Conditions: 150 mM KOAc, 10 mM MgCl2 and 150 mM bicine (pH 8.5), 24 C. An RNA of 177 nucleotides, treated with 2A3 and DMS and read out base by base. For 2A3 the reverse transcriptase was SuperScript II with manganese. DMS adducts were read by reverse transcription with MarathonRT.

[RMDB]
RNA sequence: GGGAACGACUCGAGUAGAGUCGAAAAAGUGGCUAGUUCGCUAGCCACUAAAGACCGCACGGCAGCGGAAAUAAGCCGAAACCCAAACAGAAGCGACUGAAAGACUCCAAACAUUCGUGUUUGGAAACUUUCUCUUAUGAUUCGUCAUAAGAGAAAGAAAAGAAACAACAACAACAAC
Reactivity to 2A3 in 0.01 (KOAc 150mM, MgCl2 10mM, bicine 150mM(pH8.5), 24C), signal-to-noise 2, nucleotides 027 to 126: a010g010u000g000g020c000u000a000g040u040u040c080g020c080u000a000g010c010c000a000c000u000a000a000a000g010a030c000c000g000c020a030c040g060g000c020a060g000c090g040g000a110a240a120u150a110a000g020c010c010g030a140a100a090c000c000c000a040a050a030c030a030g100a190a040g100c070g090a040c040u110g060a090a040a000g020a030c050u020c020c000a000a030a020c000a020u080u070c140g080u030g000u050u010u020g000g000a000a020a010
Reactivity to DMS in 0.01 (KOAc 150mM, MgCl2 10mM, bicine 150mM(pH8.5), 24C), signal-to-noise 4, nucleotides 027 to 126: a050g020u010g000g010c000u000a010g030u010u010c260g020c000u000a000g000c000c000a000c000u000a010a050a090g000a290c010c010g020c060a090c070g000g000c050a130g020c010g000g000a070a070a070u010a080a100g010c020c010g000a080a110a140c020c020c020a070a090a140c110a060g000a110a110g020c060g010a070c050u000g010a060a070a100g000a090c140u010c000c010a000a020a010c000a020u000u010c210g020u010g010u000u010u000g000g000a010a070a100